[RMDB]
Chemical mapping of a 177-nucleotide RNA with DMS and 2A3.
For DMS the reverse transcriptase was MarathonRT.

RNA sequence: GGGAACGACUCGAGUAGAGUCGAAAAACACUGCUUGACAUAUAUUGUUAGAAGCACCUCGCAUUUGUGGGUUCUCUUAAGCAAAAUACUUGCAUUAGGUCUCAGCUGGGGCUGUGCAUCAGGCGGUCACUUAUACGCUGUUCGCAGCGUAUAAGUGAAAAGAAACAACAACAACAAC
Reactivity to DMS in 0.01 (KOAc 150mM, MgCl2 10mM, bicine 150mM(pH8.5), 24C), signal-to-noise 1, nucleotides 027 to 126: a100c110a080c030u000g020c020u000u010g030a070c150a130u010a150u000a090u000u010g010u000u000a100g000a080a090g020c130a040c040c010u010c040g030c120a150u000u010u020g050u010g020g000g010u010u010c060u010c030u000u010a040a050g000c030a030a010a050a100u000a060c200u010u000g010c030a030u010u010a090g010g020u000c030u000c010a100g030c150u020g040g000g000g000c040u000g030u000g020c030a090u000c040a020g000g010c020g000g020u000
Reactivity to 2A3 in 0.01 (KOAc 150mM, MgCl2 10mM, bicine 150mM(pH8.5), 24C), signal-to-noise 3, nucleotides 027 to 126: a010c030a020c020u030g000c000u030u020g040a030c060a000u130a020u070a040u210u060g030u030u050a090g030a130a000g030c050a010c000c000u110c030g070c070a220u020u130u300g100u130g020g050g000u060u020c030u010c000u040u060a090a020g000c000a030a030a040a070u100a130c070u040u060g000c010a040u000u170a050g000g030u000c010u000c020a150g070c110u290g010g000g000g070c020u040g000u000g000c000a010u030c020a010g000g050c000g000g030u010
The DMS profile rests on 857 reads. The reactions ran in a buffer of 150 mM KOAc, 10 mM MgCl2 and 150 mM bicine (pH 8.5), at 24 C.